[RMDB]
RNA sequence: GGGAACGACUCGAGUAGAGUCGAAAAUUACGAACUAUUAGUCUGAUCUAAUAAUACAUGCAGGUGGGAAAUUCGGUGAAACACAACAAAUGAGGUUUCAGUUAUUUGGGCUCGUGAGAGCAGCCUGGGAUUAUUCGGAAUUCGUUCCGAAUAAUCCAAAAGAAACAACAACAACAAC
Reactivity to 2A3 in 0.01 (KOAc 150mM, MgCl2 10mM, bicine 150mM(pH8.5), 24C), signal-to-noise 4, nucleotides 027 to 126: u160u090a050c010g030a040a020c060u030a030u070u030a010g040u000c160u130g060a090u040c000u010a020a020u070a090a020u060a070c060a020u140g050c020a000g010g020u070g030g070g080a040a080a100u100u060c050g040g000u060g030a030a020a000c040a000c010a060a160c050a080a150a100u180g030a160g070g020u010u000u000c020a010g060u080u060a160u080u140u140g040g010g000c010u020c030g040u090g060a070g000a010g040c010a000g020c010c000u000g020
Reactivity to DMS in 0.01 (KOAc 150mM, MgCl2 10mM, bicine 150mM(pH8.5), 24C), signal-to-noise 4, nucleotides 027 to 126: u050u010a120c130g000a080a110c110u000a030u020u000a020g000u000c100u010g020a070u060c000u000a020a030u010a020a120u020a140c080a060u010g020c030a030g000g000u010g010g000g000a080a040a080u000u010c100g010g040u000g000a030a040a030c050a020c060a060a150c220a050a070a080u010g000a130g000g000u000u020u000c030a030g000u000u000a040u020u020u000g010g000g020c000u000c060g020u040g000a200g000a030g020c020a080g000c040c010u000g010
Annotation
Structure probing data (2A3 and DMS) for a 177-nucleotide construct. Conditions: 150 mM KOAc, 10 mM MgCl2 and 150 mM bicine (pH 8.5), 24 C.